RNA sequence: GGGAACGACUCGAGUAGAGUCGAAAAAUUGUGCCUUACAUCAGUCCUUACCGUAAAAAUAAGAUAGCACUGAAUAGUGCGACGCUUUCGGAUGAUGUGGAGCUUAACCAGAAUACCCAGAAUGUGGAAUGACUGUUCGGUUCGCCGAACAGUCAUUAAAAGAAACAACAACAACAAC
Reactivity to 2A3 in 0.01 (KOAc 150mM, MgCl2 10mM, bicine 150mM(pH8.5), 24C), signal-to-noise 1, nucleotides 027 to 126: a000u180u170g090u040g030c000c000u010u020a010c000a000u000c000a040g220u060c000c000u060u100a100c000c000g100u100a020a020a120a120a120u000a100a000g130a230u100a010g000c000a000c000u010g130a200a160u150a300g000u000g040c000g010a010c080g000c030u000u060u180c010g010g010a000u060g010a000u040g010u050g000g000a000g030c040u060u080a040a000c000c000a010g090a120a040u060a110c000c000c020a060g180a100a080u090g040u100g100g110
Reactivity to DMS in 0.01 (KOAc 150mM, MgCl2 10mM, bicine 150mM(pH8.5), 24C), signal-to-noise 2, nucleotides 027 to 126: a160u010u000g010u020g020c030c000u000u000a040c020a000u000c010a010g020u000c070c050u000u010a130c300c090g010u000a010a040a060a110a080u030a080a090g010a050u000a240g020c000a000c000u000g000a140a040u020a030g030u000g000c000g010a060c170g000c040u010u000u000c180g000g000a200u000g030a030u000g000u000g000g000a110g000c000u000u010a040a070c110c070a100g000a080a120u000a110c010c000c010a120g000a110a080u010g010u020g000g030
Structure probing data (2A3 and DMS) for a 177-nucleotide construct. Values cover nucleotides 27 to 126. 2A3 is a SHAPE reagent: it acylates the 2'-hydroxyl of flexible nucleotides of all four kinds. It was measured as part of the RMDB library OK2TST. For 2A3, 573 sequencing reads were counted.